[RMDB]
RNA sequence: GGGAACGACUCGAGUAGAGUCGAAAACCACCGAAGUUCGCUUCGGUGGAAAAGAUACCGGUCUCGGUAUCAAAGUGAGACCCACUGACCACAGGAAACUGAAAACCGAUCCGUUCGCGGAUCGGAAGUAUGCAUCCAAGUUCGCUUGGAUGCAUACAAAAGAAACAACAACAACAAC
Reactivity to DMS in 0.01 (KOAc 150mM, MgCl2 10mM, bicine 150mM(pH8.5), 24C), signal-to-noise 2, nucleotides 027 to 126: c000c000a030c000c000g030a010a010g010u000u000c300g050c010u000u000c000g000g010u000g020g000a010a040a100a150g000a010u000a000c030c010g040g030u020c190u020c020g000g000u000a020u020c000a040a110a060g000u000g010a190g000a180c060c020c000a100c060u010g000a080c090c100a100c140a060g020g000a100a060a220c060u000g010a100a030a110a160c000c000g000a000u000c010c000g050u010u000c240g020c000g030g000a000u000c000g000g000a000a040
Reactivity to 2A3 in 0.01 (KOAc 150mM, MgCl2 10mM, bicine 150mM(pH8.5), 24C), signal-to-noise 4, nucleotides 027 to 126: c000c000a000c000c000g010a010a000g030u050u090c100g100c140u010u000c010g000g000u010g000g000a000a000a000a030g010a010u020a000c010c000g100g170u230c300u180c260g000g010u040a020u000c010a000a070a000g070u050g040a150g040a060c000c020c020a010c050u060g130a060c010c040a030c040a100g010g110a080a050a060c060u080g050a070a060a060a090c010c000g010a000u000c020c000g030u030u050c290g000c010g110g000a000u000c010g000g010a000a010